Source information:
Structure probing data (2A3 and DMS) for a 177-nucleotide construct. In probing experiments dimethyl sulfate is read out at A N1 and C N3, which are open when not base-paired. The RNA was probed in 150 mM KOAc, 10 mM MgCl2 and 150 mM bicine (pH 8.5) at 24 C. Source: RMDB library OK1LIB, as collected in RNAgym. The DMS profile rests on 9,429 reads.

RNA sequence: GGGAACGACUCGAGUAGAGUCGAAAAGGGCAACCAUCAACAGUUGUAGAUAACACACUUAUGGUUGUCAUUGCUAUGUAUUAUUCAUGCUGCAAACAAGGGUGGUCGGAGCAAGAUAUCCAGGACAGUCCUUUAUACUCUUCGGAGUAUAAAGGACAAAAGAAACAACAACAACAAC
Reactivity to 2A3 in 0.01 (KOAc 150mM, MgCl2 10mM, bicine 150mM(pH8.5), 24C), signal-to-noise 6, nucleotides 027 to 126: g060g000g000c000a000a000c000c010a010u080c080a000a110c010a130g020u050u090g110u180a100g060a280u260a210a030c050a000c000a010c050u020u030a010u020g000g000u000u000g010u000c020a020u000u140g010c020u070a060u130g030u030a080u230u030a090u070u200c040a050u100g020c020u010g030c020a000a100a080c020a100a070g030g040g020u050g000g030u050c030g020g000a030g050c010a070a000g030a070u080a040u060c020c010a010g030g030a010c010a040
Reactivity to DMS in 0.01 (KOAc 150mM, MgCl2 10mM, bicine 150mM(pH8.5), 24C), signal-to-noise 5, nucleotides 027 to 126: g010g020g000c000a010a020c010c000a030u000c240a080a070c180a070g020u030u040g010u010a090g020a120u060a090a130c120a040c060a050c070u000u000a040u010g000g000u010u000g010u000c020a040u010u020g000c020u020a030u000g030u040a030u030u030a070u010u010c040a050u000g010c080u000g010c120a050a090a100c160a070a070g000g020g030u010g000g000u000c020g000g000a060g010c040a060a030g010a070u010a050u010c030c040a100g020g000a090c160a100